[RMDB]
RNA sequence: GGGAACGACUCGAGUAGAGUCGAAAACUGGUGGAGAACAAGGCCAUCCGCGGCGACGAGGCCGGGCUGGUGUACAACGCGCUGCUGGAGCGCGUGGCCCGCUACAACAGCACCAACGUGCAGACGAACCUGGACCGCAUGGUGACCGACGUGCGCGGAUCUUUCCAGUUUUCGAACUGGAAAGAUCAAAAGAAACAACAACAACAAC
Reactivity to DMS in 0.01 (KOAc 150mM, MgCl2 10mM, bicine 150mM(pH8.5), 24C), signal-to-noise 1, nucleotides 027 to 156: c050u000g000g010u020g010g010a090g010a040a150c090a090a130g010g000c020c020a050u010c020c090g040c020g020g020c000g030a070c140g010a110g040g040c050c030g010g030g050c030u000g030g020u030g030u020a030c040a100a050c000g010c010g010c000u030g010c020u000g010g000a110g030c000g000c020g030u000g000g010c020c040c000g000c040u000a070c050a060a030c030a050g000c020a090c030c030a040a090c080g100u000g000c020a080g000a100c050g000a070a100c040c010u000g030g030a100c050c070g000c040a050u000g050g000u000g010a140c030c020g010a100c050g020u010g030c000g030c070g020
Reactivity to 2A3 in 0.01 (KOAc 150mM, MgCl2 10mM, bicine 150mM(pH8.5), 24C), signal-to-noise 4, nucleotides 027 to 156: c030u030g070g010u040g020g070a060g030a090a050c050a130a080g080g020c010c020a030u010c020c030g030c010g050g000c020g010a060c090g030a060g050g020c060c000g010g000g000c010u030g010g040u090g030u110a090c090a090a010c040g000c010g010c000u090g020c080u150g080g150a020g010c000g010c000g000u010g000g010c000c000c010g030c010u090a050c050a140a010c000a020g010c010a010c050c010a010a060c070g050u100g000c010a000g050a060c050g060a030a020c010c030u030g010g070a050c020c010g010c090a060u060g010g000u040g030a080c000c020g040a070c020g040u070g070c030g010c040g040